[RMDB]
The data come from the RNA Mapping Database (RMDB), library OK2TRN. Structure probing data (DMS) for a 177-nucleotide construct. The reactions ran in a buffer of 150 mM KOAc, 10 mM MgCl2 and 150 mM bicine (pH 8.5), at 24 C.
RNA sequence: GGGAACGACUCGAGUAGAGUCGAAAAUGAUCGAGAGAUCUAACGAUGUACGCGAGUCGCGUGCACGGACUCGAGCGAAAGCUCGGUCGAAAGACCGCGUACAUCGGUCGGCAAGUGUACAGUCGACGAUGCCAUGGCCAUUCGUGGCCAUGGCAUCAAAAGAAACAACAACAACAAC
Reactivity to DMS in 0.01 (KOAc 150mM, MgCl2 10mM, bicine 150mM(pH8.5), 24C), signal-to-noise 1, nucleotides 027 to 126: u000g020a000u010c000g000a130g030a160g020a010u000c000u010a040a200c030g000a040u000g000u000a000c000g020c000g000a120g010u000c000g020c100g020u000g030c040a010c020g000g000a040c000u000c010g020a020g000c000g000a120a130a230g020c000u000c000g020g000u000c000g000a070a120a170g000a020c000c020g010c020g010u000a030c000a000u000c000g000g010u000c000g000g020c040a040a200g010u000g030u000a020c030a300g020u000c000g030a170c240